[RMDB]
RNA sequence: GGGAACGACUCGAGUAGAGUCGAAAAAGUCAGGCCGGCCUGGCCAGGCCGGAUCGGAUCUGCUGAGUGGAUCAGUAGUACCACGGAUCGACGGUACGCGCGACGAGGCCGAUCUGAUCGGCCGUAGGUACGAAUCAGAGUUCGCUCUGAUUCGUACAAAAGAAACAACAACAACAAC
Reactivity to 2A3 in 0.01 (KOAc 150mM, MgCl2 10mM, bicine 150mM(pH8.5), 24C), signal-to-noise 2, nucleotides 027 to 126: a000g080u050c030a010g040g000c050c080g040g210c050c050u090g000g010c000c020a050g010g000c000c000g060g020a010u000c000g000g040a010u000c000u030g000c020u040g020a010g010u060g020g100a100u090c040a060g080u170a060g000u020a000c020c030a070c080g120g100a280u200c110g110a070c060g000g000u040a020c020g000c030g010c000g100a020c000g000a070g000g010c010c030g010a000u000c020u050g010a030u010c000g000g000c010c000g010u010a010g000
Reactivity to DMS in 0.01 (KOAc 150mM, MgCl2 10mM, bicine 150mM(pH8.5), 24C), signal-to-noise 3, nucleotides 027 to 126: a120g020u000c060a040g020g020c060c050g020g040c010c010u000g030g020c050c110a130g030g020c000c000g010g010a020u000c010g000g010a010u000c010u000g000c000u000g000a300g020u000g000g010a110u000c100a130g000u000a100g000u000a050c000c000a180c080g010g010a120u010c140g020a090c160g010g000u000a010c030g010c040g010c050g010a020c030g010a300g000g000c010c020g000a030u010c020u010g000a020u000c010g000g010c010c000g010u010a020g020